[RMDB]
RNA sequence: GGGAACGACUCGAGUAGAGUCGAAAAUAUUGCUGCAUGCCAUCUCGGCAGUGCCUCAGUGUAACUUGGCCGAAGGGAACCGUAUGUCUUUGUCUUUUGCGCAAUAAAGGUUGGUCCUUGCGACUGCAUACUUAGUUACGUUCGCGUAACUAAGUAUAAAAGAAACAACAACAACAAC
Reactivity to 2A3 in 0.01 (KOAc 150mM, MgCl2 10mM, bicine 150mM(pH8.5), 24C), signal-to-noise 7, nucleotides 027 to 126: u120a030u030u110g020c040u050g000c000a040u060g010c010c000a110u070c090u030c100g010g020c020a020g030u020g020c000c010u140c060a110g020u080g030u230a190a140c040u050u130g160g000c010c010g050a060a050g060g000g020a050a040c040c020g060u130a070u140g090u040c050u050u060u050g060u050c030u020u130u100u100g020c050g000c030a030a040u090a160a120a020g110g000u100u140g020g020u050c000c000u020u100g020c050g040a050c040u030g000c030
Reactivity to DMS in 0.01 (KOAc 150mM, MgCl2 10mM, bicine 150mM(pH8.5), 24C), signal-to-noise 9, nucleotides 027 to 126: u010a050u010u000g010c030u010g020c030a070u000g010c030c020a120u010c130u010c080g010g010c020a050g010u000g010c020c030u010c130a080g010u010g010u000a050a090c070u000u000g020g010c010c020g010a080a090g000g000g010a060a080c080c080g010u000a070u010g010u000c060u000u000u000g010u000c040u000u000u000u000g020c050g010c050a050a050u010a040a070a090g010g010u000u010g010g000u000c040c060u000u000g010c060g010a170c040u010g000c220
Conditions: 150 mM KOAc, 10 mM MgCl2 and 150 mM bicine (pH 8.5), 24 C. The record gives the reactivity of an RNA of 177 nucleotides to 2A3 and DMS. The data come from the RNA Mapping Database (RMDB), library OK2TRN. High DMS reactivity at an A or C suggests that its Watson-Crick edge is free.